This 177-nucleotide RNA was probed chemically with DMS. For DMS the reverse transcriptase was MarathonRT. For DMS, 3,502 sequencing reads were counted. The reactions ran in a buffer of 150 mM KOAc, 10 mM MgCl2 and 150 mM bicine (pH 8.5), at 24 C.

[RMDB]
RNA sequence: GGGAACGACUCGAGUAGAGUCGAAAAGAUAUGGACGUAGAGCGAUAAGUGGCAAUCGGAAACGAUUGGCCACUUUUGACGCUCGAGGUCCUAAGUCAAAACUGUGAGAAGUUCGCUUCUCACAGAACAUGGGACUAACGUUCGCGUUAGUCCCAUGAAAAGAAACAACAACAACAAC
Reactivity to DMS in 0.01 (KOAc 150mM, MgCl2 10mM, bicine 150mM(pH8.5), 24C), signal-to-noise 3, nucleotides 027 to 126: g010a050u000a280u010g000g010a020c000g010u010a300g000a000g020c000g000a130u010a020a010g020u010g000g000c000a000a000u000c000g000g000a070a070a120c000g010a000u000u000g010g020c000c000a000c000u000u000u010u010g010a210c060g030c000u000c000g000a180g000g000u000c000c000u000a010a090g000u010c030a090a070a090a140c010u010g010u000g000a010g010a000a010g010u000u020c210g000c010u000u000c000u000c000a000c000a000g000a050a120